[RMDB]
RNA sequence: GGGAACGACUCGAGUAGAGUCGAAAAAACUGUGGAGCGAAGCAGGGAUCAGGUGAUGGCUGGAUGGUGCAGACUCUGCAUGUGUACUCCAUGUCGUUAUCAUCAAUGACAAGAUGGCAUUGAUUACCGAAACAGUAGGCUUCGGCCUACUGUUUCGAAAAGAAACAACAACAACAAC
Reactivity to 2A3 in 0.01 (KOAc 150mM, MgCl2 10mM, bicine 150mM(pH8.5), 24C), signal-to-noise 1, nucleotides 027 to 126: a000a000c080u060g000u020g050g030a070g050c040g020a040a000g000c060a040g110g000g000a080u090c020a000g150g010u100g040a060u100g020g040c050u040g060g000a080u090g080g010u030g080c060a000g080a190c070u070c000u080g000c020a090u070g090u030g030u140a070c000u000c010c000a010u040g030u020c020g000u020u000a080u020c040a010u000c000a000a020u040g000a060c010a020a050g200a220u170g040g000c010a020u000u070g030a010u070u110a080c030
Reactivity to DMS in 0.01 (KOAc 150mM, MgCl2 10mM, bicine 150mM(pH8.5), 24C), signal-to-noise 1, nucleotides 027 to 126: a050a010c080u000g040u020g000g000a050g010c000g020a110a120g000c050a100g000g020g000a090u000c070a070g000g010u000g020a070u000g010g020c000u000g000g030a020u000g040g000u040g000c050a100g000a080c060u000c030u000g010c090a070u020g030u000g020u020a040c070u000c000c040a040u020g040u000c030g010u000u000a070u000c070a020u000c030a000a000u000g000a000c040a130a220g000a150u000g000g030c010a020u000u000g010a010u000u020a130c170
The record gives the reactivity of an RNA of 177 nucleotides to 2A3 and DMS.
For 2A3, 811 sequencing reads were counted.
The reactions ran in a buffer of 150 mM KOAc, 10 mM MgCl2 and 150 mM bicine (pH 8.5), at 24 C.
For DMS, 1,001 sequencing reads were counted.